[RMDB]
RNA sequence: GGGAACGACUCGAGUAGAGUCGAAAAAUUGCUUGCUUCACCUGGUAUGUGGCAACUCUGUUAGGGGGACCAUAGGCCCCUGUGGUCUGCAUGGAGCUUAAUCCUUUUACCAUGGCGUGACUCCAAUAAUGGUAAAAUGUCACUUCACUUCCAUUGGACAUACCUAGCAGUUCGCUGCUAGGUAUGUAAAAGAAACAACAACAACAAC
Reactivity to DMS in 0.01 (KOAc 150mM, MgCl2 10mM, bicine 150mM(pH8.5), 24C), signal-to-noise 2, nucleotides 027 to 156: a080u000u000g000c020u000u000g020c000u000u000c000a110c030c030u010g000g030u010a060u010g030u000g000g030c030a040a060c040u010c020u000g030u000u010a150g010g010g010g020g000a050c030c030a150u000a080g020g020c020c030c030c050u000g050u000g020g000u000c040u010g030c080a120u010g020g010a050g010c010u040u000a070a090u010c050c070u000u010u000u000a020c020c020a000u010g010g010c080g030u010g010a130c050u000c020c020a070a140u000a090a060u000g010g040u010a060a030a020a060u000g020u010c030a060c050u000u000c060a040c070u000u000c020c010a140u010u010g010g000
Reactivity to 2A3 in 0.01 (KOAc 150mM, MgCl2 10mM, bicine 150mM(pH8.5), 24C), signal-to-noise 4, nucleotides 027 to 156: a000u140u130g020c010u010u030g010c000u030u050c020a050c030c040u060g060g040u100a100u140g060u040g020g040c010a020a050c020u050c010u060g100u200u180a090g010g010g000g000g020a020c030c000a060u060a080g050g020c020c030c000c010u010g020u040g000g020u030c020u030g040c020a050u050g020g000a010g020c000u060u080a050a040u080c000c010u020u080u070u080a060c020c010a000u050g040g000c060g050u020g050a060c020u000c040c010a090a120u220a150a120u110g010g040u060a040a060a020a040u100g020u010c020a000c000u100u050c080a060c050u090u040c040c010a100u090u140g040g030